Source information: Chemical mapping of a 177-nucleotide RNA with DMS and 2A3. For 2A3, 23,462 sequencing reads were counted. For DMS the reverse transcriptase was MarathonRT. For DMS, 21,068 sequencing reads were counted. Values cover nucleotides 27 to 126. 2A3 adducts were read by reverse transcription with SuperScript II with manganese.
RNA sequence: GGGAACGACUCGAGUAGAGUCGAAAAACAGCGAUGCUGAACGCAUCACGAAGGAUAAUGUACGCGAAUGGAGAGACGCGCUAAUAGCGCAGGGCCUUUCCCUCAAGACUGUUAACGAUAAGCGCCAGCACUAAAUAAUCUUCGGAUUAUUUAGUGCAAAAGAAACAACAACAACAAC
Reactivity to DMS in 0.01 (KOAc 150mM, MgCl2 10mM, bicine 150mM(pH8.5), 24C), signal-to-noise 9, nucleotides 027 to 126: a070c090a130g020c040g010a020u000g010c010u010g010a140a300c180g010c010a010u000c010a070c070g010a140a100g010g010a100u010a060a070u000g000u000a080c060g010c150g010a060a070u000g010g000a070g010a060g010a080c080g000c010g010c010u000a090a110u010a130g020c010g010c030a100g020g010g020c060c030u000u000u010c010c000c060u010c070a070a140g010a080c060u000g000u000u000a060a100c100g000a100u000a070a130g010c070g010c050c080a090
Reactivity to 2A3 in 0.01 (KOAc 150mM, MgCl2 10mM, bicine 150mM(pH8.5), 24C), signal-to-noise 9, nucleotides 027 to 126: a000c030a000g040c020g040a020u030g010c030u150g150a110a030c060g000c010a000u010c020a000c040g040a070a060g050g010a040u060a170a070u230g050u110a060c030g010c020g070a050a060u110g040g000a040g000a000g010a050c030g030c000g000c030u080a160a080u060a300g000c010g000c020a010g020g040g000c010c000u010u030u010c010c000c000u020c030a040a080g030a070c030u040g030u130u070a090a030c040g030a070u020a190a050g030c020g040c050c020a010